The record gives the reactivity of an RNA of 177 nucleotides to DMS and 2A3. The DMS profile rests on 800 reads. The reactions ran in a buffer of 150 mM KOAc, 10 mM MgCl2 and 150 mM bicine (pH 8.5), at 24 C. High DMS reactivity at an A or C suggests that its Watson-Crick edge is free.
[RMDB]
RNA sequence: GGGAACGACUCGAGUAGAGUCGAAAAGUGUCGGACUCGCAAGUGCGAAUAUAUUUUAUCCCUAAACAGGGAGUGGAAAGCACGUCCUCGAGUGGAAAACACGUCCAUCCCAAAGCGAGAAAUGAAAGUAACCAUUGGUCUUCGGACCAAUGGUUACAAAAGAAACAACAACAACAAC
Reactivity to DMS in 0.01 (KOAc 150mM, MgCl2 10mM, bicine 150mM(pH8.5), 24C), signal-to-noise 2, nucleotides 027 to 126: g000u000g020u010c000g040g040a090c000u000c010g020c300a160a160g000u020g000c000g000a150a060u000a150u010a070u000u000u010u010a130u020c000c000c030u000a030a090a090c260a090g010g000g010a000g010u000g000g000a040a130a170g000c010a060c010g010u000c230c180u020c060g000a050g000u000g040g000a040a120a040a050c060a040c000g020u020c120c080a090u000c000c000c000a060a090a030g040c110g010a060g000a070a100a090u020g000a140a060a060
Reactivity to 2A3 in 0.01 (KOAc 150mM, MgCl2 10mM, bicine 150mM(pH8.5), 24C), signal-to-noise 1, nucleotides 027 to 126: g050u070g030u020c060g020g090a010c000u020c000g010c090a110a070g000u020g010c060g100a170a000u040a030u000a030u050u200u040u170a070u030c000c000c000u060a220a190a010c030a040g000g030g040a000g010u180g050g030a100a050a010g000c000a010c000g080u100c000c020u040c010g030a000g030u020g000g040a010a000a000a030c010a000c000g010u130c050c000a040u020c000c000c000a070a000a000g120c100g020a070g100a110a060a080u150g060a180a080a030